The record gives the reactivity of an RNA of 207 nucleotides to DMS and 2A3.
Source: RMDB library OK3TST, as collected in RNAgym.
DMS adducts were read by reverse transcription with MarathonRT.
RNA sequence: GGGAACGACUCGAGUAGAGUCGAAAAGUAUCAAGGACUUGAAGCAGUUCAUCCAGGUGGCCAAGGCCUACCAGGACCGCUAUCAGGACCUGGGGGCCUACAGUUCUGCCAGGAAGUGCCUGGCCAAACAGAGGCAGAGGAUGCUGCAAGAGAGAAAGUAUUAAUCAGUCUUCGGACUGAUUAAUACAAAAGAAACAACAACAACAAC
Reactivity to DMS in 0.01 (KOAc 150mM, MgCl2 10mM, bicine 150mM(pH8.5), 24C), signal-to-noise 1, nucleotides 027 to 156: g030u010a100u010c050a150a040g030g020a120c010u000u020g030a210a120g010c030a020g000u040u020c050a040u000c000c030a210g060g040u000g030g000c000c000a150a140g020g020c010c000u030a150c070c020a040g010g030a080c010c010g010c180u000a210u000c060a010g000g000a080c000c000u010g080g010g000g030g000c020c000u000a000c060a120g000u000u000c010u000g000c000c000a020g010g010a080a140g000u000g010c000c000u000g000g000c030c050a000a090a040c060a200g000a200g040g020c040a100g000a160g000g010a070u000g000c010u000g020c000a040a140g010a190g000a130g000a090a060a170
Reactivity to 2A3 in 0.01 (KOAc 150mM, MgCl2 10mM, bicine 150mM(pH8.5), 24C), signal-to-noise 3, nucleotides 027 to 156: g060u080a070u300c090a080a120g150g020a050c000u000u030g010a110a010g000c000a000g010u230u300c040a000u000c000c000a020g240g110u130g170g030c020c020a010a000g000g000c010c000u040a300c070c000a010g010g010a060c000c000g000c140u140a130u300c170a090g010g000a040c000c000u000g000g000g000g000g000c000c010u000a000c000a000g020u040u060c010u040g000c000c000a000g010g020a120a130g070u040g200c000c000u000g000g000c000c000a020a000a000c010a000g110a060g110g000c000a010g040a070g050g000a000u010g020c000u000g000c000a020a000g040a000g000a000g020a030a090a000